[RMDB]
RNA sequence: GGGAACGACUCGAGUAGAGUCGAAAAAUACGGUAUACACUAUUCCACGUACGGAAACCAUCCAAGCAUGCGAAAGGAUGGUAGCGUACGGAAACCAUCCGUCAGAGGCGCACUAGGCAUGCGAAAGGAUGGCUAGUUAAUGGAAUUCAUGAAGACGACUGACCAUAAGGUUCGCCUUAUGGUCAGUAAAAGAAACAACAACAACAAC
Reactivity to 2A3 in 0.01 (KOAc 150mM, MgCl2 10mM, bicine 150mM(pH8.5), 24C), signal-to-noise 1, nucleotides 027 to 156: a000u090a020c050g010g080u110a090u030a030c040a000c090u050a110u030u100c000c000a010c060g060u020a030c040g070g120a000a000a190c020c000a020u050c020c000a040a010g000c050a040u040g010c040g180a200a070a000g030g000a020u020g000g000u020a000g000c000g030u050a060c100g000g190a020a060a000c000c040a020u020c000c000g030u000c040a020g020a060g120g000c010g000c030a000c050u060a050g020g090c000a020u000g010c020g010a080a020a000g000g000a000u000g000g000c020u020a010g000u020u060a040a050u020g010g000a010a000u050u240c070a090u160g060a010a040g060a030c090g030
Notes:
Structure probing data (2A3) for a 207-nucleotide construct. The data come from the RNA Mapping Database (RMDB), library OK3TST.